The record gives the reactivity of an RNA of 177 nucleotides to DMS and 2A3.
DMS adducts were read by reverse transcription with MarathonRT.
Source: RMDB libraries RFM100 and RFMREP, as collected in RNAgym.

[RMDB]
RNA sequence: GGGAACGACUCGAGUAGAGUCGAAAAACACUCUACGGAGUGAAAACUUGUUAGAAGGUUACUUGUUAGUUCAGGACCUCAUUACUUUCUGCCUGAACUAUUGCAGUAGCCUCCUAACUGGUUAUAAUCGCAUGUAUAAAUUCGUUUAUACAUGCGAAAAAGAAACAACAACAACAAC
Reactivity to DMS in 0.01 (KOAc 150mM, MgCl2 10mM, bicine 150mM(pH8.5), 24C), signal-to-noise 6, nucleotides 027 to 126: a130c020a000c000u000c000u000a130c150g030g000a010g000u000g000a070a070a030a010c000u000u000g010u000u000a000g010a030a010g010g010u000u000a000c000u000u010g010u000u000a010g000u000u000c000a010g000g000a080c080c060u010c120a110u020u030a100c150u000u010u010c080u010g010c000c000u000g000a010a000c000u010a000u020u010g010c080a020g010u000a010g010c000c000u000c020c000u000a000a010c000u000g000g000u000u000a080u010a120a120
Reactivity to 2A3 in 0.01 (KOAc 150mM, MgCl2 10mM, bicine 150mM(pH8.5), 24C), signal-to-noise 9, nucleotides 027 to 126: a000c010a000c000u000c000u020a080c220g100g000a000g000u010g020a070a010a000a010c000u010u030g000u000u000a010g000a020a000g010g000u010u010a000c020u100u140g040u060u020a010g000u000u000c000a020g020g040a130c030c070u130c090a170u120u260a140c080u110u240u110c090u150g060c000c000u000g000a000a000c000u000a010u020u170g020c010a000g000u000a000g000c000c000u000c000c000u000a000a000c000u000g000g020u050u050a130u160a140a080